[RMDB]
Description:
Chemical mapping of a 207-nucleotide RNA with DMS and 2A3. Reactivities are given for positions 27 through 156. For DMS, 5,237 sequencing reads were counted. For 2A3, 7,394 sequencing reads were counted. For DMS the reverse transcriptase was MarathonRT. It was measured as part of the RMDB library RNAMAK.
RNA sequence: GGGAACGACUCGAGUAGAGUCGAAAACGCUGGGAUGUGCUCGUCCCUCUUUCUUGGACCUACUGAAGCGCGCACGGUAGCUAGAAAUGGACGACCCUCCUGUGCUGAAGCGCGCACGGCAACCGAAAGGUGCGAAAUCGGGAGUUCGCUCCCGAAACACCCAUCUACUUUUCGAAGUAGAUGGGUGAAAAGAAACAACAACAACAAC
Reactivity to DMS in 0.01 (KOAc 150mM, MgCl2 10mM, bicine 150mM(pH8.5), 24C), signal-to-noise 2, nucleotides 027 to 156: c070g010c020u010g000g020g020a040u000g030u010g030c130u000c030g030u010c000c000c030u000c020u010u000u000c050u010u000g030g010a120c300c000u000a070c030u000g020a050a050g010c000g010c010g000c020a300c030g000g020u010a030g020c020u000a040g020a030a180a070u020g000g010a050c000g020a050c020c030c030u000c020c000u010g020u000g000c010u010g000a040a090g000c040g040c000g030c000a300c050g010g010c010a140a090c020c020g000a110a070a170g030g020u000g020c010g000a020a090a200u000c000g000g000g000a080g020u000u000c110g020c020u010c000c000c010g000a000a100a160
Reactivity to 2A3 in 0.01 (KOAc 150mM, MgCl2 10mM, bicine 150mM(pH8.5), 24C), signal-to-noise 5, nucleotides 027 to 156: c050g000c020u040g000g020g010a040u070g080u170g060c130u010c000g020u000c010c000c020u000c020u000u070u010c040u060u230g140g060a160c010c010u010a020c010u050g050a230a030g040c020g000c000g000c020a020c030g010g000u010a010g010c070u050a030g040a040a110a090u260g000g000a000c000g010a010c010c000c000u000c000c000u050g030u050g020c010u030g020a160a050g010c020g000c000g000c010a010c020g040g000c020a040a020c010c000g060a110a060a020g060g000u030g000c020g030a100a040a050u040c010g000g010g000a000g010u070u100c160g070c120u010c000c000c000g000a000a010a000